Notes:
Structure probing data (2A3) for a 177-nucleotide construct.

RNA sequence: GGGAACGACUCGAGUAGAGUCGAAAAGAAAGAAAGAAAGGUCCUUGCCCUCAAGGAGCUCACAGUCUAUUGAGUUACCUUUCUGAUUUUCCCACUAGAUUGUGAGCUCCUGGAGGGCAGGCACUAACACGUCAACUGGCUUCGGCCAGUUGACGUGAAAAGAAACAACAACAACAAC
Reactivity to 2A3 in 0.01 (KOAc 150mM, MgCl2 10mM, bicine 150mM(pH8.5), 24C), signal-to-noise 2, nucleotides 027 to 126: g030a000a040a000g110a020a080a010g110a060a130a010g030g020u100c040c050u130u160g000c000c000c000u010c040a030a010g010g000a000g010c000u010c000a020c000a020g000u000c000u020a040u060u190g060a060g030u140u090a080c000c000u050u110u100c110u120g100a140u030u010u030u080c000c000c000a000c000u000a000g000a000u000u000g000u000g020a000g000c020u000c000c010u000g000g000a000g000g000g000c000a000g010g060c000a000c040u050a040a020
2A3 adducts were read by reverse transcription with SuperScript II with manganese.